[RMDB]
RNA sequence: GGGAACGACUCGAGUAGAGUCGAAAAAAUAAUUGGCGAAACUCGUUUCGCGUUGGCUGCCUAAUUCAAGGAAUUAGCGUGCCUUCAUGCUAAGGGUUUGAUAUCUGCUUAAACCCGGUGCAUUCAUAAGACUUUUGCUUGUUCGCAAGCAAAAGAACUUGCUUCCUGAGUUCGCUCAGGAAGCAAGAAAAGAAACAACAACAACAAC
Reactivity to 2A3 in 0.01 (KOAc 150mM, MgCl2 10mM, bicine 150mM(pH8.5), 24C), signal-to-noise 1, nucleotides 027 to 156: a000a010u270a010a060u070u070g030g000c000g000a090a000a030c050u090c150g030u020u000u000c000g030c020g000u000u010g010g010c000u090g040c020c030u000a050a040u000u020c120a260a060g160g060a100a000u000u000a000g030c000g050u020g000c010c030u000u030c040a010u010g000c000u010a020a060g020g010g000u020u020u000g060a060u120a080u270c180u270g060c020u040u010a000a010a000c010c010c000g000g010u030g030c010a000u010u190c020a010u090a140a160g110a140c000u010u020u000u000g010c000u010u000g030u090u080c200g000c170a000a000g000c000a000a000a000a000g000a010a000